[RMDB]
RNA sequence: GGGAACGACUCGAGUAGAGUCGAAAAACGUAGCCGUGUUGACGUCCAUGCUCACUGAUCCCUCCCAUAUAACAGCAGAGGCGGCCGGGAGAAGGUUGGCGAGAGGGUCACCCCCUUCUAUGGCCAGAUCGUACUACGGGUUCGCCCGUAGUACGAUAAAAGAAACAACAACAACAAC
Reactivity to 2A3 in 0.01 (KOAc 150mM, MgCl2 10mM, bicine 150mM(pH8.5), 24C), signal-to-noise 2, nucleotides 027 to 126: a000c080g040u080a030g020c000c000g050u050g020u110u070g100a050c040g000u000c000c000a070u060g040c000u060c050a050c020u040g050a080u040c000c010c000u020c000c030c020a040u120a000u040a140a110c030a020g060c010a030g010a040g130g130c050g010g000c040c040g070g000g000a130g020a070a020g060g030u050u050g060g000c040g000a040g010a040g090g000g010u020c020a030c020c000c020c030c000u050u060c030u050a140u060g050g000c000c030a010g010
Reactivity to DMS in 0.01 (KOAc 150mM, MgCl2 10mM, bicine 150mM(pH8.5), 24C), signal-to-noise 2, nucleotides 027 to 126: a080c020g030u000a030g030c000c000g050u000g000u020u000g000a230c080g000u000c020c070a060u040g000c030u000c070a090c030u000g010a040u000c050c010c010u000c030c000c030a030u000a080u030a110a110c150a030g010c190a100g000a070g060g020c130g040g000c010c020g000g000g000a060g000a120a080g010g000u000u000g040g000c030g030a050g030a070g000g010g010u030c050a090c140c070c030c010c000u000u000c010u030a130u010g000g050c010c020a080g000